[RMDB]
RNA sequence: GGGAACGACUCGAGUAGAGUCGAAAAGAUACGCUUCGGCGUAUCAAAAAGCGUACUACCACAAGAUAAGGAGCUGGACGAAUAGGUUCCCAAAUAGGAACCUACUAUCCAGAACUACUCUUGAGUGGUAUCGCAAAAACACAAGUUCGCUUGUGAACACAUCGGUGGUGUUCGCACCACCGAUGUGAAAAGAAACAACAACAACAAC
Reactivity to 2A3 in 0.01 (KOAc 150mM, MgCl2 10mM, bicine 150mM(pH8.5), 24C), signal-to-noise 1, nucleotides 027 to 156: g000a000u000a000c000g000c020u060u230c300g220g010c010g020u010a000u000c030a010a010a010a000a010g030c050g070u090a070c080u010a000c000c060a050c010a150a000g030a030u180a290a050g080g000a050g100c000u000g010g010a010c020g080a300a250u010a020g000g000u000u010c010c030c000a070a300a000u280a070g040g000a000a000c000c020u000a000c030u050a050u000c000c000a000g000a010a000c000u060a100c000u010c000u030u050g000a000g030u000g020g020u000a000u060c010g000c000a000a000a040a060a000c000a000c000a000a090g030u060u070c250g060c040u050u030g010u040g130a110a000
The data come from the RNA Mapping Database (RMDB), library RNAMAK. The record gives the reactivity of an RNA of 207 nucleotides to 2A3. The RNA was probed in 150 mM KOAc, 10 mM MgCl2 and 150 mM bicine (pH 8.5) at 24 C. 2A3 adducts were read by reverse transcription with SuperScript II with manganese.